[RMDB]
This 207-nucleotide RNA was probed chemically with 2A3 and DMS. For 2A3, 3,024 sequencing reads were counted. The reactions ran in a buffer of 150 mM KOAc, 10 mM MgCl2 and 150 mM bicine (pH 8.5), at 24 C. The data come from the RNA Mapping Database (RMDB), library ARCHII. DMS adducts were read by reverse transcription with MarathonRT. 2A3 adducts were read by reverse transcription with SuperScript II with manganese.
RNA sequence: GGGAACGACUCGAGUAGAGUCGAAAAGGUGCAGAUGACCUCGUAAAUCCAUCUGCAAACCAAAUAAACGCCAACGACGACGUUUACGCACUGGCCGCUUAAGCCGGCCGGCCUCUGAUCAGCAGCUCGCUUACAAGCGGCUGGUUGGGGGUAACCCGAUAGUAUGUUACUUCGGUAACAUACUAUCAAAAGAAACAACAACAACAAC
Reactivity to 2A3 in 0.01 (KOAc 150mM, MgCl2 10mM, bicine 150mM(pH8.5), 24C), signal-to-noise 4, nucleotides 027 to 156: g040g000u020g000c000a000g000a020u020g020a070c060c000u160c100g090u150a080a060a100u040c030c000a010u000c000u000g000c020a060a040a040c010c010a040a080a010u080a010a040a000c020g000c050c050a130a080c130g140a010c080g020a020c020g030u020u040u040a090c090g020c040a050c090u060g000g000c000c010g000c050u200u160a080a020g050c080c000g000g000c000c000g010g000c000c000u000c010u010g010a020u020c000a000g030c000a020g020c020u050c080g120c110u150u200a070c040a120a010g000c000g000g000c000u010g000g000u000u000g010g000g010g010g000u000a010a040c020c000c010
Reactivity to DMS in 0.01 (KOAc 150mM, MgCl2 10mM, bicine 150mM(pH8.5), 24C), signal-to-noise 1, nucleotides 027 to 156: g000g050u010g030c020a030g000a030u000g000a060c130c030u000c260g060u010a090a100a080u010c110c010a050u030c000u000g020c030a020a040a100c040c030a080a120a040u010a010a020a050c010g000c000c000a070a260c250g000a170c000g000a020c000g030u080u000u000a020c050g050c040a080c030u000g030g070c000c000g050c050u000u000a010a130g070c070c010g020g000c000c000g000g010c000c000u000c010u000g000a020u000c010a000g010c000a030g000c000u000c040g020c160u000u040a150c060a030a040g000c020g020g000c120u000g020g010u000u000g030g000g000g000g000u000a010a040c030c030c120